The record gives the reactivity of an RNA of 207 nucleotides to 2A3 and DMS. Reactivities are given for positions 27 through 156. Source: RMDB library M2RFPK, as collected in RNAgym. In probing experiments dimethyl sulfate is read out at A N1 and C N3, which are open when not base-paired. Conditions: 150 mM KOAc, 10 mM MgCl2 and 150 mM bicine (pH 8.5), 24 C. 2A3 adducts were read by reverse transcription with SuperScript II with manganese.
[RMDB]
RNA sequence: GGGAACGACUCGAGUAGAGUCGAAAAGGAGGACGAAGCAUAUUUCUGUUUCUGGAGGAUUAUUUAUAAUCUGCCGGAAAGUGUUGCAGGUGGCUGGGAUAUGUUCAGUCUGGUAGAAUUAAGCACGAAAACGUGUCCUUGUUCGCAAGGACACGAACGUCAAUCAGUAGUUCGCUACUGAUUGACGAAAAGAAACAACAACAACAAC
Reactivity to 2A3 in 0.01 (KOAc 150mM, MgCl2 10mM, bicine 150mM(pH8.5), 24C), signal-to-noise 3, nucleotides 027 to 156: g030g030a030g010g010a010c050g020a040a000g010c010a050u000a060u070u160u050c030u050g120u040u040u020c010u010g000g010a040g020g000a010u010u020a020u010u260u030a080u020a030a000u000c010u030g060c010c010g000g020a060a030a030g070u080g030u080u080g030c050a050g060g060u060g060g000c040u020g010g010g010a020u050a020u080g060u090u050c040a020g020u000c020u030g020g020u050a030g070a080a060u170u100a090a040g040c040a020c090g090a030a060a100a050c000g000u000g000u000c000c000u000u010g000u040u030c100g000c090a000a000g000g040a030c000a010c000g000a000a000
Reactivity to DMS in 0.01 (KOAc 150mM, MgCl2 10mM, bicine 150mM(pH8.5), 24C), signal-to-noise 1, nucleotides 027 to 156: g000g000a100g030g010a080c050g020a120a180g040c030a080u000a070u000u000u000c060u010g040u000u000u020c010u010g000g020a050g010g010a040u010u000a010u010u000u000a090u010a100a030u010c010u010g000c010c000g010g020a010a020a040g000u000g040u000u010g000c040a100g020g010u000g020g000c050u000g000g000g020a070u000a020u000g020u000u000c060a210g000u000c050u000g010g000u000a100g010a090a140u030u000a050a110g040c040a090c120g030a060a030a060a120c040g010u000g000u010c010c010u010u000g010u000u000c260g010c020a010a010g000g000a010c000a000c000g000a010a030